Chemical mapping of a 207-nucleotide RNA with 2A3 and DMS. Conditions: 150 mM KOAc, 10 mM MgCl2 and 150 mM bicine (pH 8.5), 24 C. 2A3 adducts were read by reverse transcription with SuperScript II with manganese. Values cover nucleotides 27 to 156.

RNA sequence: GGGAACGACUCGAGUAGAGUCGAAAAAGUUCGCCACCUUCGGCAAGGCCGCCGGUCUCACCGGCGAGAACCUCGCCAACUUCUCGAUGAAGACGACGAAGCUCGCCGCCGACCUCGCCUCGUUCCAGGGCGUGACUGUCGAGGAAGCGAUCAUGGCGUAUAUCUGGGAAUUCGUUCCCAGAUAUACAAAAGAAACAACAACAACAAC
Reactivity to 2A3 in 0.01 (KOAc 150mM, MgCl2 10mM, bicine 150mM(pH8.5), 24C), signal-to-noise 3, nucleotides 027 to 156: a000g060u040u030c040g020c020c010a110c040c020u090u110c030g020g000c030a030a070g090g030c050c060g060c070c040g020g020u010c040u020c100a070c040c000g000g000c020g000a010g000a010a050c010c020u020c010g000c010c010a040a070c000u050u030c050u050c110g290a280u290g050a060a040g050a110c050g010a020c040g000a030a000g020c000u000c010g030c000c010g020c020c030g000a020c000c010u030c020g020c000c010u080c050g080u100u010c020c030a030g030g000g000c010g010u030g030a100c020u060g020u020c010g000a010g020g020a030a010g020c010g020a000u070c080a120u120g100g010c060
Reactivity to DMS in 0.01 (KOAc 150mM, MgCl2 10mM, bicine 150mM(pH8.5), 24C), signal-to-noise 2, nucleotides 027 to 156: a130g010u010u000c010g030c000c040a170c080c010u000u000c050g020g010c020a020a060g040g000c010c030g000c060c040g000g020u010c060u000c190a200c130c010g020g000c000g000a020g000a050a140c060c010u000c010g090c000c010a070a150c060u000u000c000u010c130g000a220u000g010a100a050g030a300c060g000a060c020g000a080a040g000c020u000c010g000c020c030g010c030c220g000a110c120c000u000c020g010c010c040u000c020g000u000u000c090c050a290g000g000g060c000g000u010g010a080c030u010g000u000c040g020a080g050g010a280a110g040c010g000a060u000c030a090u000g030g020c120